[RMDB]
RNA sequence: GGGAACGACUCGAGUAGAGUCGAAAAAUGUAUUACUUGCCAUGUUCUAUCUGGAAUUCUAAUUGUGAUUCAUGUUCAAAAUACAUUCUUGAACAUAACAGGCUUCCUGAUAAAUACUUCUUAUAUCCAGGUUUAAGUUCACUUUCAGUGCUGCCAACAGUAGGUAAAUAUUCGUAUUUACCUACUGAAAAGAAACAACAACAACAAC
Reactivity to DMS in 0.01 (KOAc 150mM, MgCl2 10mM, bicine 150mM(pH8.5), 24C), signal-to-noise 3, nucleotides 027 to 156: a070u010g000u010a080u010u000a040c030u000u010g020c050c050a120u000g010u000u000c040u000a100u000c070u000g020g010a080a040u000u000c040u000a080a150u000u000g020u010g010a170u000u000c110a070u000g020u000u000c020a040a040a070a080u000a100c100a110u000u000c060u000u000g000a030a010c020a030u000a060a080c060a070g010g020c140u000u000c020c030u010g010a120u000a040a070a070u000a020c040u000u000c070u010u000a120u000a080u000c060c030a060g010g010u000u000u000a030a120g000u000u010c030a050c050u010u000u000c040a110g000u000g000c020u000g010c020c020a070a200
Reactivity to 2A3 in 0.01 (KOAc 150mM, MgCl2 10mM, bicine 150mM(pH8.5), 24C), signal-to-noise 6, nucleotides 027 to 156: a000u090g020u050a080u060u070a080c060u050u060g020c020c010a080u040g030u040u050c060u060a170u030c030u040g040g030a040a050u140u030c050u090a170a160u180u120g060u070g110a120u050u070c020a000u020g000u010u070c000a050a060a030a060u140a090c070a090u080u090c020u050u060g000a030a010c020a040u060a050a040c030a050g000g020c000u030u010c010c000u020g020a030u030a060a090a020u060a050c000u040u100c020u070u110a070u020a030u150c040c030a030g040g040u030u060u110a030a030g000u050u070c020a020c070u060u130u090c020a010g020u030g100c030u030g020c060c010a020a020
Structure probing data (DMS and 2A3) for a 207-nucleotide construct.
Conditions: 150 mM KOAc, 10 mM MgCl2 and 150 mM bicine (pH 8.5), 24 C.
High DMS reactivity at an A or C suggests that its Watson-Crick edge is free.
The data come from the RNA Mapping Database (RMDB), library OK3TST.
For DMS, 8,517 sequencing reads were counted.
DMS adducts were read by reverse transcription with MarathonRT.
For 2A3 the reverse transcriptase was SuperScript II with manganese.
The 2A3 profile rests on 4,685 reads.